[RMDB]
Notes:
The data come from the RNA Mapping Database (RMDB), library OK1LIB. The record gives the reactivity of an RNA of 177 nucleotides to DMS and 2A3. The RNA was probed in 150 mM KOAc, 10 mM MgCl2 and 150 mM bicine (pH 8.5) at 24 C. Reactivities are given for positions 27 through 126. In probing experiments dimethyl sulfate is read out at A N1 and C N3, which are open when not base-paired.
RNA sequence: GGGAACGACUCGAGUAGAGUCGAAAAGCUUCCGGAAAGGAAAGAGCACUCUAGACGCUCUUUCGGCCGUUUGUAACAUCGCCAAGACCGCUAUUUCUGGUGAUAGAUGGUUAGGGGGCAGGAAGGAGCCUGCAGUAUGCUUCGGCAUACUGCAGGCAAAAGAAACAACAACAACAAC
Reactivity to DMS in 0.01 (KOAc 150mM, MgCl2 10mM, bicine 150mM(pH8.5), 24C), signal-to-noise 1, nucleotides 027 to 126: g000c000u000u010c030c000g040g020a050a060a120g010g050a000a000a000g060a020g000c060a210c210u000c050u050a150g030a230c140g010c000u000c000u010u030u000c000g000g040c010c030g000u000u020u000g050u040a080a170c130a100u000c100g000c040c000a050a080g000a080c210c190g000c040u000a020u030u000u000c040u050g000g000u100g050a060u000a000g010a080u010g010g060u010u010a070g000g000g000g010g020c000a070g030g040a010a060g020g000a090
Reactivity to 2A3 in 0.01 (KOAc 150mM, MgCl2 10mM, bicine 150mM(pH8.5), 24C), signal-to-noise 2, nucleotides 027 to 126: g020c040u030u000c000c020g000g120a150a060a060g130g000a000a000a000g020a010g000c020a060c040u220c080u110a070g040a140c170g000c000u000c000u000u000u000c000g000g000c010c000g150u030u030u030g060u070a090a000c040a090u020c010g100c030c040a030a040g050a020c000c120g020c180u080a210u160u160u020c040u050g010g000u090g010a000u010a090g080a150u040g100g030u030u020a070g000g110g020g020g000c000a000g060g040a020a050g030g000a010